[RMDB]
RNA sequence: GGGAACGACUCGAGUAGAGUCGAAAAUUCCAUUGACCCACUGCUCGAGGACGUCCUCCCUGUCUCCUCGGUUCUUCUUCGAUCCGGACCGGCUCAUCUCGGCAAGGGGCGGCAGUCCUCAGUGCUCGUAUCCCUUUUACUUCGGUAAAAGGGAUACAAAAGAAACAACAACAACAAC
Reactivity to DMS in 0.01 (KOAc 150mM, MgCl2 10mM, bicine 150mM(pH8.5), 24C), signal-to-noise 2, nucleotides 027 to 126: u000u010c100c110a130u000u000g010a180c030c010c030a080c140u000g000c030u000c130g030a030g000g010a080c050g000u010c010c030u000c010c010c030u000g010u000c020u000c080c060u000c020g030g010u000u010c070u000u000c120u000u010c140g010a060u000c070c070g020g000a090c030c050g000g000c090u000c120a140u020c080u000c040g020g000c080a110a090g010g000g000g030c190g010g000c060a060g010u010c010c010u010c020a070g000u000g020c050u010c120
Reactivity to 2A3 in 0.01 (KOAc 150mM, MgCl2 10mM, bicine 150mM(pH8.5), 24C), signal-to-noise 2, nucleotides 027 to 126: u040u000c020c010a030u020u170g080a050c010c000c040a020c050u110g010c010u030c080g000a000g020g000a030c010g040u040c000c000u020c000c000c000u020g020u010c060u030c030c020u060c020g000g000u040u000c020u120u050c040u100u140c080g080a100u000c040c030g030g010a010c010c010g020g000c040u060c060a130u030c060u060c090g000g000c040a090a080g010g020g000g000c060g000g000c020a070g020u030c020c000u000c010a020g020u010g020c020u010c100